[RMDB]
RNA sequence: GGGAACGACUCGAGUAGAGUCGAAAACAACACCUGGAACACGUGGAUGGUUCACAUCUCGUUCGCCACCAUGGCCCUGGCGUGCUUCGGGGUGGCCGUGGUCCUGUCCGGCUGCGUGUGCCUACGGUCCGUGCGGGCCUGGACGCAGAGGUAUCGGCGAAAUACUUUACUUCGGUAAAGUAUUUCGAAAAGAAACAACAACAACAAC
Reactivity to 2A3 in 0.01 (KOAc 150mM, MgCl2 10mM, bicine 150mM(pH8.5), 24C), signal-to-noise 8, nucleotides 027 to 156: c070a010a020c030a030c020c020u030g050g010a040a020c030a010c090g090u150g040g030a080u030g030g070u260u210c130a080c010a140u040c050u040c060g070u110u050c060g030c030c010a050c010c020a060u120g030g000c010c010c030u090g100g010c060g060u130g020c050u090u110c060g060g000g010g000u020g030g000c000c010g030u030g010g000u030c010c020u060g060u000c020c030g090g070c040u020g000c000g000u130g050u130g090c000c010u070a100c100g010g000u000c020c020g100u200g150c220g010g000g020c000c010u000g010g010a010c010g010c020a010g010a020g050g030u080a050u200c020g020g000
Reactivity to DMS in 0.01 (KOAc 150mM, MgCl2 10mM, bicine 150mM(pH8.5), 24C), signal-to-noise 2, nucleotides 027 to 156: c040a070a060c010a080c020c010u000g030g010a050a060c030a020c040g020u020g010g000a060u000g020g020u000u010c120a100c030a070u000c000u000c050g000u000u000c080g010c010c010a070c030c040a090u010g010g000c030c030c010u000g000g020c060g010u010g020c030u000u010c050g010g000g010g050u000g030g020c030c050g010u000g010g000u000c040c030u000g010u000c040c060g040g010c020u000g010c030g010u010g000u000g030c020c020u000a040c130g050g010u010c020c030g000u000g020c100g030g010g000c000c000u020g010g020a040c000g020c010a050g000a060g010g010u010a060u000c040g000g000